[RMDB]
RNA sequence: GGGAACGACUCGAGUAGAGUCGAAAACGCGCAGGGAUGUUUUCGAAUCUAUGUUUAUGCACUCCCUUUGACUGAUUCACAGUUACGUGCAUGGAUUCGCAUAGAUAGGCGUCUCAAAGGGAGCGCGCUCCCGACUAGUCUUCGGACUAGUCGGGAGAAAAGAAACAACAACAACAAC
Reactivity to DMS in 0.01 (KOAc 150mM, MgCl2 10mM, bicine 150mM(pH8.5), 24C), signal-to-noise 2, nucleotides 027 to 126: c060g010c050g010c050a210g010g020g000a040u010g020u000u000u000u020c070g000a100a050u000c010u000a000u010g010u000u010u010a040u020g000c030a020c000u000c080c050c060u000u020u000g000a020c080u000g010a230u010u000c230a130c040a050g000u000u000a100c180g000u000g000c010a040u010g000g010a110u000u010c130g000c080a040u020a020g000a070u000a080g000g010c120g030u000c040u000c010a040a080a070g020g010g000a100g030c000g020c010g010
Reactivity to 2A3 in 0.01 (KOAc 150mM, MgCl2 10mM, bicine 150mM(pH8.5), 24C), signal-to-noise 2, nucleotides 027 to 126: c020g030c000g000c070a060g010g030g060a040u030g070u000u080u090u130c020g050a080a060u000c000u010a020u030g090u030u170u040a060u090g000c000a010c020u090c020c000c000u000u020u070g000a000c000u000g040a130u170u130c090a060c010a230g040u050u140a070c100g010u020g000c010a030u040g060g080a120u180u150c030g000c040a020u040a020g090a030u020a030g070g000c010g030u000c010u000c030a080a090a000g090g060g000a090g000c000g000c000g010
Source: RMDB library OK2TRN, as collected in RNAgym.
Structure probing data (DMS and 2A3) for a 177-nucleotide construct.
DMS (dimethyl sulfate) methylates the pairing face of unpaired adenines and cytosines.